[RMDB]
RNA sequence: GGGAACGACUCGAGUAGAGUCGAAAACUUGUACGUCUUCCUCCCGGAUAACCUCCACCGACUCUGUGGAACCGCGUUCGGCAACAUACCGUCAACGUGUCAUUGGCUUGUGUGUCAUUGAGAUCCCCCAUUAAGCCGAGUUCGCUCGGCUUAAUGGAAAAGAAACAACAACAACAAC
Reactivity to DMS in 0.01 (KOAc 150mM, MgCl2 10mM, bicine 150mM(pH8.5), 24C), signal-to-noise 1, nucleotides 027 to 126: c050u000u010g030u010a120c110g040u020c010u000u010c020c020u010c060c040c010g000g020a050u000a060a180c110c060u000c040c000a090c090c050g000a070c030u030c010u000g000u000g010g000a060a080c080c030g000c080g000u000u030c020g010g030c100a050a060c150a050u030a110c070c070g000u000c090a030a060c030g010u000g020u000c020a070u010u020g000g000c090u000u000g010u000g000u000g000u000c030a060u020u000g000a050g020a180u000c000c000c040

The record gives the reactivity of an RNA of 177 nucleotides to DMS. The DMS profile rests on 1,024 reads. Conditions: 150 mM KOAc, 10 mM MgCl2 and 150 mM bicine (pH 8.5), 24 C.